[RMDB]
RNA sequence: GGGAACGACUCGAGUAGAGUCGAAAAAAAAUUGAUAAUGGACAUAUCCCUAGACUUACUUAUCAUACUAAUCGCAUAAAAUGUUCUUCUGAGCGAUUAAACUUUAAAUUUGAUGAACAUGCAUGGCGUUACGGUAGCGGUUCGCCGCUACCGUAACAAAAGAAACAACAACAACAAC
Reactivity to 2A3 in 0.01 (KOAc 150mM, MgCl2 10mM, bicine 150mM(pH8.5), 24C), signal-to-noise 2, nucleotides 027 to 126: a000a000a000a010u120u030g030a030u030a170a020u210g030g030a020c000a090u250a120u060c000c000c000u050a090g080a000c030u050u150a030c000u120u040a100u000c020a000u020a220c100u090a020a020u030c000g000c070a000u120a220a300a020a060u120g050u000u040c000u050u030c090u180g060a050g040c040g010a000u000u020a020a020a020c000u090u010u290a110a300a300u150u030u140g080a090u020g020a090a040c050a030u140g020c120a060u070g160g000c060

This 177-nucleotide RNA was probed chemically with 2A3. Reactivities are given for positions 27 through 126. The RNA was probed in 150 mM KOAc, 10 mM MgCl2 and 150 mM bicine (pH 8.5) at 24 C.